RNA sequence: GGGAACGACUCGAGUAGAGUCGAAAAGAUAUGGAUUGGGACAUGCGUACGGAUGUCGGAAACGACAUCGUACGCAACAGCCCACGGUCCUAAGUCAAAGAAGGAGUACGUUCGCGUACUCCUUCAAUCUUGCCAAUAAGUUCGCUUAUUGGCAAGAAAAAGAAACAACAACAACAAC
Reactivity to DMS in 0.01 (KOAc 150mM, MgCl2 10mM, bicine 150mM(pH8.5), 24C), signal-to-noise 4, nucleotides 027 to 126: g010a070u000a300u000g000g010a020u010u010g000g000g000a030c030a270u000g000c010g010u000a000c000g020g030a030u000g020u000c010g000g000a080a070a230c010g010a000c000a010u000c000g010u000a000c000g010c000a000a020c220a110g000c010c000c000a080c300g020g010u000c000c000u010a060a130g020u000c060a090a110a190g000a010a010g000g000a010g020u000a000c000g020u010u010c280g010c000g010u000a000c000u000c010c000u000u000c000a030a050
Reactivity to 2A3 in 0.01 (KOAc 150mM, MgCl2 10mM, bicine 150mM(pH8.5), 24C), signal-to-noise 1, nucleotides 027 to 126: g070a010u110a080u160g070g000a050u040u020g020g060g000a020c090a190u040g000c000g000u000a000c080g300g110a060u000g010u010c000g020g010a110a040a030c010g000a000c000a020u000c000g000u000a010c000g000c010a000a000c000a000g040c000c000c010a010c090g020g000u000c000c010u070a180a040g060u050c080a210a020a140g000a000a000g000g030a020g000u020a010c030g030u030u130c110g000c000g080u010a000c000u010c000c000u000u000c010a000a000